[RMDB]
RNA sequence: GGGAACGACUCGAGUAGAGUCGAAAAGUUCUUUAUGGGGAAGCAGAUUUGGGUACCACCCAAGUAUUGACUCACCCAUCAACAACCGCUAUGUAUUUCGUACAUUACUGCCAGCCACCAUGAAUAUGAGGUAUCUCAUAUUCGUAUGAGAUACCUCAAAAGAAACAACAACAACAAC
Reactivity to 2A3 in 0.01 (KOAc 150mM, MgCl2 10mM, bicine 150mM(pH8.5), 24C), signal-to-noise 9, nucleotides 027 to 126: g000u030u010c010u010u080u050a030u030g010g000g000g020a060a010g010c010a020g010a070u020u010u020g010g000g010u100a190c040c070a070c010c050c000a000a000g030u040a120u160u120g050a180c000u010c030a110c000c000c000a000u030c020a000a060c020a020a040c010c030g020c080u050a040u110g050u030a090u060u160u110c070g030u040a020c010a040u050u080a050c020u060g030c010c010a020g010c010c010a040c010c010a070u110g060a070a020u190a160u220
Reactivity to DMS in 0.01 (KOAc 150mM, MgCl2 10mM, bicine 150mM(pH8.5), 24C), signal-to-noise 6, nucleotides 027 to 126: g000u000u000c030u000u000u030a030u010g010g010g010g010a180a100g000c010a010g000a030u000u000u000g000g020g000u020a200c300c240a180c000c000c000a020a020g010u010a040u020u000g000a070c010u000c110a210c000c010c000a020u020c090a050a030c100a050a090c050c060g010c080u000a040u010g000u010a040u010u030u030c090g000u000a030c060a040u000u000a050c090u010g010c030c020a050g010c010c010a030c020c020a050u000g010a070a040u020a090u020